[RMDB]
RNA sequence: GGGAACGACUCGAGUAGAGUCGAAAAGAUCUCGGAAGGAAUCCCCCAAGCUGCCAACAGAGGAAGAAACAAGACAGAGGAGCCCCCAUGACGCUGGUGAACCAUCGCGAGCUGGGAGAGGAGAGGCAAGGGUUUACGUUCGCGUAAACCAAAAGAAACAACAACAACAAC
Reactivity to 2A3 in 0.01 (KOAc 150mM, MgCl2 10mM, bicine 150mM(pH8.5), 24C), signal-to-noise 7, nucleotides 027 to 129: g040a010u010c010u020c030g010g030a020a010g030g020a040a150u090c000c000c000c000c000a030a030g030c050u090g050c030c030a070a070c040a130g030a020g030g000a040a020g000a010a070a020c040a040a030g060a020c060a020g030a020g020g000a020g020c000c020c000c000c020a070u110g020a020c040g010c040u020g010g020u060g010a020a030c020c000a040u030c050g020c040g060a000g000c010u040g010g010g010a020g010a010g010g000a030g010a010g010g000c010a020a060g070
Reactivity to DMS in 0.01 (KOAc 150mM, MgCl2 10mM, bicine 150mM(pH8.5), 24C), signal-to-noise 8, nucleotides 027 to 129: g020a070u060c030u020c030g000g000a060a040g020g020a090a100u040c030c000c030c050c010a110a100g040c130u030g020c060c080a080a010c170a050g000a000g020g010a020a040g000a080a060a060c110a050a040g030a060c120a050g000a020g000g000a070g000c040c010c020c020c020a100u000g030a080c160g010c040u030g000g000u000g040a030a060c110c000a050u020c040g030c060g020a060g010c060u050g000g010g000a070g030a000g000g000a000g000a000g020g000c100a020a020g030